This 177-nucleotide RNA was probed chemically with 2A3 and DMS.
RNA sequence: GGGAACGACUCGAGUAGAGUCGAAAAGAUAUGGAGAUUCCGAUAAGCUCCAUUCGGAAACGAAUGAGAGCUUUUGACGGAAAUUCCUAAGUCAAAAGCUUACCGAUUCUUCGGAAUCGGUAAGCAACAUAUCUUAUACGUUCGCGUAUAAGAUAUGAAAAGAAACAACAACAACAAC
Reactivity to 2A3 in 0.01 (KOAc 150mM, MgCl2 10mM, bicine 150mM(pH8.5), 24C), signal-to-noise 5, nucleotides 027 to 126: g000a010u040a010u080g000g010a020g000a050u020u000c010c010g020a080u070a300a030g000c000u000c000c000a000u000u010c000g020g010a060a020a010c020g010a000a000u130g030a180g010a040g300c070u010u010u020u010g020a010c000g000g020a010a030a010u040u010c000c000u020a060a020g040u020c040a040a070a110a120g010c000u000u010a000c000c000g010a010u010u000c020u030u120c300g130g000a000a000u000c000g000g000u000a000a000g000c000a000a000
Reactivity to DMS in 0.01 (KOAc 150mM, MgCl2 10mM, bicine 150mM(pH8.5), 24C), signal-to-noise 8, nucleotides 027 to 126: g000a030u000a130u010g000g000a020g000a080u000u000c010c000g010a070u010a020a010g020c000u000c000c000a020u000u000c000g010g000a040a020a070c000g010a010a000u000g000a100g010a010g010c000u000u000u000u000g010a300c040g010g000a010a010a080u000u000c000c000u000a030a130g000u000c020a110a100a120a160g000c000u000u000a000c010c000g010a010u000u000c000u000u020c200g020g000a010a000u000c000g000g000u000a000a000g010c010a020a050